[RMDB]
RNA sequence: GGGAACGACUCGAGUAGAGUCGAAAAGAUUCCUUCGGGAAUCACGUUAGCGUACUACCUUUGUAUUUCCGCUGGCCGAGUCGCUCCCAAAUAGGAGCGACGUUUGACGCCAGAACUACGGAAUAAGGUAUCGCAAGAGCAUCAGUUCGCUGAUGAAAAAACAGGUAUCGUUCGCGAUACCUGUUUUAAAAGAAACAACAACAACAAC
Reactivity to DMS in 0.01 (KOAc 150mM, MgCl2 10mM, bicine 150mM(pH8.5), 24C), signal-to-noise 1, nucleotides 027 to 156: g010a030u000u010c010c000u000u030c300g050g040g000a010a020u000c030a070c150g020u000u000a100g030c050g010u010a120c100u000a030c020c020u000u020u000g020u000a160u000u010u000c020c020g000c000u000g020g040c010c010g010a100g020u000c010g030c000u000c000c010c000a000a070a190u000a010g030g020a030g020c010g000a010c000g010u010u010u010g020a240c100g020c010c000a180g000a040a090c010u000a100c020g000g000a020a040u020a020a030g030g030u000a050u020c040g000c050a130a110g000a120g000c020a040u000c040a030g040u000u000c180g010c000u000g030a020u010g010a000a110
Reactivity to 2A3 in 0.01 (KOAc 150mM, MgCl2 10mM, bicine 150mM(pH8.5), 24C), signal-to-noise 2, nucleotides 027 to 156: g000a000u000u010c000c020u040u070c230g090g000g000a000a000u000c010a000c050g070u050u220a020g020c010g020u070a230c030u000a000c010c010u120u040u200g250u190a180u050u070u020c000c000g000c000u000g010g000c020c030g050a000g010u020c000g000c000u060c000c060c000a100a190a020u180a000g000g000a000g000c050g000a020c050g000u050u030u150g040a030c040g010c000c000a000g000a020a020c090u120a020c030g000g030a000a000u010a030a000g050g000u000a050u300c000g000c010a020a020g040a030g080c000a000u000c000a000g000u020u090c140g000c050u020g020a070u040g080a160a000